[RMDB]
RNA sequence: GGGAACGACUCGAGUAGAGUCGAAAAGAUAUGGAUUUCGCAAAUGUAGGCGACCGAAGAACCUCACUGCUCUCGGAAACGAGAGCAGUGAGGGGAGGUCGCUACACUCGUACGAAAUCCUAAGUCACAGAAGAAAUAUGUUCGCAUAUUUCUUCUGAAAAGAAACAACAACAACAAC
Reactivity to DMS in 0.01 (KOAc 150mM, MgCl2 10mM, bicine 150mM(pH8.5), 24C), signal-to-noise 3, nucleotides 027 to 126: g010a060u010a300u020g000g000a030u000u000u000c000g040c040a070a150a110u000g010u000a050g070g000c010g010a010c000c000g010a090a230g010a180a270c010c000u000c000a010c000u000g020c000u010c010u000c010g000g010a110a070a230c000g030a020g000a000g000c000a000g010u010g010a010g000g000g000g000a040g030g040u000c000g030c000u000a000c000a010c120u000c300g030u000a130c040g000a020a010a020u000c000c000u000a020a110g010u000c040a270
Reactivity to 2A3 in 0.01 (KOAc 150mM, MgCl2 10mM, bicine 150mM(pH8.5), 24C), signal-to-noise 2, nucleotides 027 to 126: g020a000u080a090u210g000g000a010u030u010u020c010g020c040a050a140a140u100g010u020a110g220g300c000g020a000c010c000g100a140a050g010a020a000c010c010u000c010a000c000u010g000c020u000c000u010c040g040g020a150a090a090c000g000a000g000a030g030c010a000g010u010g000a000g030g000g010g000a020g020g000u010c000g000c000u000a000c000a000c000u180c020g150u210a070c040g000a010a010a000u010c000c000u010a220a020g030u020c030a000